[RMDB]
Chemical mapping of a 177-nucleotide RNA with 2A3.
Values are in units of 0.01, from 0 to 300, in steps of 10.
It was measured as part of the RMDB library OK2TST.
RNA sequence: GGGAACGACUCGAGUAGAGUCGAAAAUUUGGCAUUUUUAUUGCCCCUUUUAUUGUAUACGCAUUGCUUGCCUUGGUGGUGACAAUGAUUAUACGCUCUAUUUUAUGGAGAACGGGUUUAAUAAAAACGCAACUUACGUGUUCGCACGUAAGUUGCGAAAAGAAACAACAACAACAAC
Reactivity to 2A3 in 0.01 (KOAc 150mM, MgCl2 10mM, bicine 150mM(pH8.5), 24C), signal-to-noise 1, nucleotides 027 to 126: u070u030u090g070g040c030a020u000u000u090u070u070a070u060u050g090c030c030c000c000u010u130u120u250a140u090u210g030u040a020u000a030c000g010c010a000u010u010g000c070u020u060g000c050c000u120u280g300g020u160g130g010u000g080a000c000a020a000u000g000a000u030u020a010u000a000c050g000c010u000c010u010a140u060u200u040u070a080u140g010g000a030g010a000a010c060g030g010g000u050u100u080a070a030u060a040a010a000a000a000